[RMDB]
RNA sequence: GGGAACGACUCGAGUAGAGUCGAAAAGAUAUGGAGACGUGAACUACAAGGACGAAACCUCCAACAGCAGCUCUCGGAAACGAGAGCUGACAUGGAGACUGACGGUACUUGCACGUCUCCUAAGUCAGUCAUAGGAACGGUUCGCCGUUCCUAUGACAAAAGAAACAACAACAACAAC
Reactivity to 2A3 in 0.01 (KOAc 150mM, MgCl2 10mM, bicine 150mM(pH8.5), 24C), signal-to-noise 2, nucleotides 027 to 126: g010a020u060a020u190g000g000a010g000a010c050g010u020g040a100a060c060u250a080c300a000a020g010g030a000c020g030a020a020a020c000c000u040c000c030a070a070c090a100g070c010a010g000c000u000c000u000c000g020g060a050a060a040c000g000a000g000a000g000c000u000g000a000c000a040u040g000g000a000g010a020c050u080g150a020c040g010g130u300a040c020u010u010g000c000a000c010g000u030c010u000c000c010u000a000a000g000u020c020a010
Reactivity to DMS in 0.01 (KOAc 150mM, MgCl2 10mM, bicine 150mM(pH8.5), 24C), signal-to-noise 2, nucleotides 027 to 126: g020a050u020a300u000g000g020a010g000a020c010g040u010g000a060a020c090u020a300c040a030a020g020g000a300c040g000a060a160a150c300c010u000c000c000a040a120c240a280g000c000a000g000c010u010c000u000c000g000g000a080a130a130c030g000a000g000a020g010c000u000g000a010c070a120u000g030g000a000g000a040c120u010g040a270c000g040g000u030a160c020u000u000g020c030a020c040g020u000c000u020c010c010u000a040a090g000u000c020a160
Background:
Source: RMDB library TTRDES, as collected in RNAgym. This 177-nucleotide RNA was probed chemically with 2A3 and DMS. DMS adducts were read by reverse transcription with MarathonRT. The RNA was probed in 150 mM KOAc, 10 mM MgCl2 and 150 mM bicine (pH 8.5) at 24 C. For 2A3, 3,278 sequencing reads were counted. The DMS profile rests on 1,392 reads.